[RMDB]
RNA sequence: GGGAACGACUCGAGUAGAGUCGAAAAGAUAUGGAAUUAUAGAAACUCAGCGAUGAAAUGGGAACUACUUAUGCUUCGGAAACGAAGUUUAAGCCCAUGGAGCUGAGUUUCUAUAAUUCCUAAGUCAUCAAUAACAGGGGUUCGCCCCUGUUAUUGAAAAAGAAACAACAACAACAAC
Reactivity to DMS in 0.01 (KOAc 150mM, MgCl2 10mM, bicine 150mM(pH8.5), 24C), signal-to-noise 1, nucleotides 027 to 126: g000a020u000a300u000g000g000a010a020u010u000a010u030a000g000a010a000a020c020u010c010a010g020c040g000a120u000g010a070a160a010u000g010g000g020a110a020c060u040a300c010u020u000a010u000g010c010u010u000c000g020g000a090a110a270c010g010a020a000g030u000u000u010a000a010g000c010c010c000a010u000g020g020a140g030c010u010g000a000g000u010u000u010c000u000a000u000a010a000u010u000c000c000u000a010a060g010u010c040a170
Conditions: 150 mM KOAc, 10 mM MgCl2 and 150 mM bicine (pH 8.5), 24 C. The record gives the reactivity of an RNA of 177 nucleotides to DMS. The data come from the RNA Mapping Database (RMDB), library TTRINS.